Conditions: 150 mM KOAc, 10 mM MgCl2 and 150 mM bicine (pH 8.5), 24 C. Structure probing data (DMS) for a 177-nucleotide construct.
RNA sequence: GGGAACGACUCGAGUAGAGUCGAAAAGGUCACCUCUUCGGAGGUGACCAAAAUACCGCCCGAACGGCUUCCUCACCGGGCGGAAAAACUAAAACAGGAGCAAAACCCGACUGUUCGCAGUCGGGAACUAGCAAAAUAGGUUCGCCUAUUUUGCUAGAAAAGAAACAACAACAACAAC
Reactivity to DMS in 0.01 (KOAc 150mM, MgCl2 10mM, bicine 150mM(pH8.5), 24C), signal-to-noise 1, nucleotides 027 to 126: g050g000u000c000a010c000c000u000c000u000u000c300g010g000a010g000g060u000g000a010c000c000a030a000a070a040u000a140c020c010g000c040c000c030g000a150a300c150g030g000c010u000u000c030c020u000c030a050c040c010g000g000g000c030g000g000a000a050a030a100a070c080u000a070a040a070a120c130a090g010g000a040g000c030a110a080a070a120c010c000c000g060a010c000u020g020u000u000c200g000c010a000g010u000c020g000g000g020a040a000

Background: It was measured as part of the RMDB library M2PK50.